Record summary:
Source: RMDB library OK2TST, as collected in RNAgym. An RNA of 177 nucleotides, treated with 2A3 and DMS and read out base by base. DMS adducts were read by reverse transcription with MarathonRT. Conditions: 150 mM KOAc, 10 mM MgCl2 and 150 mM bicine (pH 8.5), 24 C. The 2A3 profile rests on 1,237 reads.
RNA sequence: GGGAACGACUCGAGUAGAGUCGAAAAGUGCUUGACAUCGGCCCCUGAGGGUCAUGUCAUCCAGGCAAAAAUCUUUAGAAGUCCAGAUCACUUCUUUUUGAGAGAAUGCCAAUAUAGAAGAGUGAUCCGAUAUCUAGGACUUCGGUCCUAGAUAUCGAAAAGAAACAACAACAACAAC
Reactivity to 2A3 in 0.01 (KOAc 150mM, MgCl2 10mM, bicine 150mM(pH8.5), 24C), signal-to-noise 2, nucleotides 027 to 126: g050u010g020c040u050u060g010a000c010a020u110c210g030g000c000c000c000c050u130g150a300g010g060g020u000c000a000u000g040u040c000a000u000c010c020a060g030g000c030a000a000a020a170a300u060c030u080u160u090a150g030a210a020g050u080c150c060a050g000a050u050c010a000c010u260u280c000u000u050u020u070u040g010a050g010a010g090a230a140u180g070c060c020a000a000u240a000u040a040g040a040a000g030a010g070u000g010a020u010c020
Reactivity to DMS in 0.01 (KOAc 150mM, MgCl2 10mM, bicine 150mM(pH8.5), 24C), signal-to-noise 2, nucleotides 027 to 126: g010u000g010c060u010u010g000a010c000a020u000c230g020g020c010c020c000c300u000g020a150g010g030g020u000c010a000u000g010u000c000a050u010c050c070a110g000g010c060a020a050a080a120a090u010c030u010u000u000a090g010a060a070g000u000c070c040a170g010a010u010c040a020c000u000u010c000u000u000u000u000u000g010a090g000a070g020a110a110u000g010c040c010a080a120u000a190u000a030g010a070a010g000a060g010u000g000a010u000c020